This 177-nucleotide RNA was probed chemically with DMS.

RNA sequence: GGGAACGACUCGAGUAGAGUCGAAAAGAUAUGGAUAGCGUUGGAUUGCACACAGCUUUUGACGAACUAGUAUCGGAAACGAUACGAUGUUCGAUAAGCUGGUGCAAUCCAACGCUAUCCUAAGUCAGCUUAUAGUAUCCUUCGGGAUACUAUAAGCAAAAGAAACAACAACAACAAC
Reactivity to DMS in 0.01 (KOAc 150mM, MgCl2 10mM, bicine 150mM(pH8.5), 24C), signal-to-noise 1, nucleotides 027 to 126: g010a040u010a300u000g010g020a020u010a000g040c020g090u020u000g000g030a100u000u000g000c000a000c050a210c000a020g010c000u000u000u000u000g030a200c190g000a070a000c010u000a300g030u000a000u000c000g000g010a070a090a280c010g020a040u000a000c010g000a150u000g010u010u000c020g020a120u020a030a030g050c000u000g000g060u000g000c000a060a000u000c000c000a050a000c000g000c000u000a010u020c000c030u030a000a050g000u000c040a170